Chemical mapping of a 207-nucleotide RNA with 2A3. For 2A3 the reverse transcriptase was SuperScript II with manganese. The data come from the RNA Mapping Database (RMDB), library OK3TST.

RNA sequence: GGGAACGACUCGAGUAGAGUCGAAAAACUGAGUGCUAUAUCAGCAAGUUAAAAGGAUCUUUUGCAUACCUUUUAAUGGUAUAUAUCCUAAAACUGAAGUGUUCAAUAUAGACAUCCAGAUUGAAACUCAGGCAGUGAAUUACAUACACAACAAAUAUCAGUGACUCACUUUCGAGUGAGUCACUGAAAAAGAAACAACAACAACAAC
Reactivity to 2A3 in 0.01 (KOAc 150mM, MgCl2 10mM, bicine 150mM(pH8.5), 24C), signal-to-noise 1, nucleotides 027 to 156: a020c010u060g000a000g030u060g010c030u060a000u050a030u190c030a050g070c030a030a030g000u020u000a000a150a000a000g000g000a010u020c030u050u180u100u130g040c050a030u160a240c000c000u060u060u140u240a060a020u070g000g000u000a030u000a020u000a010u000c000c000u000a010a060a000a060c000u020g100a240a040g090u030g080u060u030c010a030a000u030a000u000a250g000a050c020a240u050c050c040a030g010a010u070u000g040a020a000a000c010u010c000a000g130g030c030a020g020u060g160a100a040u130u060a170c010a010u220a010c110a000c080a260a000c020a000a020a040u160a050